[RMDB]
RNA sequence: GGGAACGACUCGAGUAGAGUCGAAAAGAUAUGGACGGUGAUGACCAUAUGUCUCUAUAAUCUCGGAAACGAGGUAGAGAUAUAUGCAAGCCGUCCUAAGUCGGGCUAACACCUUCGGGUGUUAGAAGUUCUCCGCUAAGUUCGCUUAGCGGAGAACAAAAGAAACAACAACAACAAC
Reactivity to DMS in 0.01 (KOAc 150mM, MgCl2 10mM, bicine 150mM(pH8.5), 24C), signal-to-noise 1, nucleotides 027 to 126: g010a020u000a300u000g000g010a000c000g000g060u010g020a080u000g000a180c300c020a000u000a010u000g010u000c000u000c000u000a070u000a300a170u000c000u000c010g000g000a130a080a160c010g000a020g000g030u000a000g000a010g020a020u000a000u000a010u000g000c010a090a200g010c000c000g030u000c000c000u000a030a100g000u000c020g030g020g040c000u000a010a000c000a020c000c010u010u020c190g010g030g000u000g000u000u000a000g010a030a100
Reactivity to 2A3 in 0.01 (KOAc 150mM, MgCl2 10mM, bicine 150mM(pH8.5), 24C), signal-to-noise 1, nucleotides 027 to 126: g000a050u000a060u140g000g000a010c010g000g000u040g020a300u180g030a040c050c020a000u000a030u040g010u010c000u000c000u010a090u020a270a300u140c010u040c010g100g050a170a050a050c000g000a030g000g010u010a010g000a010g010a010u000a000u000a010u010g000c010a060a050g010c000c010g030u000c000c010u000a000a000g020u030c000g020g070g020c000u000a000a000c000a010c020c000u010u170c260g140g000g000u000g000u000u000a010g040a060a010